[RMDB]
RNA sequence: GGGAACGACUCGAGUAGAGUCGAAAAAGUGCCAACUUAAAGCGCACUGAUCUAAGUCUUGCUGCUUAAGCGCUUAGAUCUGUCGGUAUAGGGCUUGUCUUCGGCCCUGUAUCCGGCAUGGUUUUAGAGGACUUGCCGCGUGUUUGCCGCUUGCGUGCGUCCUAGUUGUGUUCGCACAACUAGGACGAAAAGAAACAACAACAACAAC
Reactivity to DMS in 0.01 (KOAc 150mM, MgCl2 10mM, bicine 150mM(pH8.5), 24C), signal-to-noise 1, nucleotides 027 to 156: a000g020u000g010c020c020a100a100c050u000u000a060a090a110g000c080g040c000a060c020u010g020a030u000c020u000a040a030g010u000c040u010u000g040c010u000g000c160u010u010a100a060g000c010g010c000u010u000a030g000a010u010c010u030g040u000c010g000g040u000a020u010a020g010g000g010c000u010u020g030u000c070u000u000c050g000g010c000c000c020u000g000u000a010u000c020c000g030g000c000a020u000g020g010u000u000u010u000a070g020a090g040g000a030c030u000u010g020c010c080g040c060g000u000g020u000u000u000g020c030c010g010c050u010u000g020c020g030u000g020
Reactivity to 2A3 in 0.01 (KOAc 150mM, MgCl2 10mM, bicine 150mM(pH8.5), 24C), signal-to-noise 5, nucleotides 027 to 156: a000g020u010g020c010c000a060a040c130u240u280a170a080a030g090c100g000c060a030c050u030g000a000u000c000u010a000a000g040u000c110u180u210g030c030u020g020c060u160u280a060a010g000c000g000c010u000u000a000g000a010u010c020u000g010u000c010g010g020u000a000u010a010g010g000g010c020u050u080g030u060c040u050u070c060g000g000c000c000c000u000g000u000a010u060c010c000g000g010c010a060u070g020g030u020u080u050u150a040g010a050g030g020a010c000u030u050g020c020c020g030c030g040u050g040u070u070u100g060c040c030g020c060u040u080g010c010g050u040g030
An RNA of 207 nucleotides, treated with DMS and 2A3 and read out base by base.
DMS adducts were read by reverse transcription with MarathonRT.
For DMS, 4,638 sequencing reads were counted.
Source: RMDB library RSTRND, as collected in RNAgym.
The RNA was probed in 150 mM KOAc, 10 mM MgCl2 and 150 mM bicine (pH 8.5) at 24 C.
The 2A3 profile rests on 3,751 reads.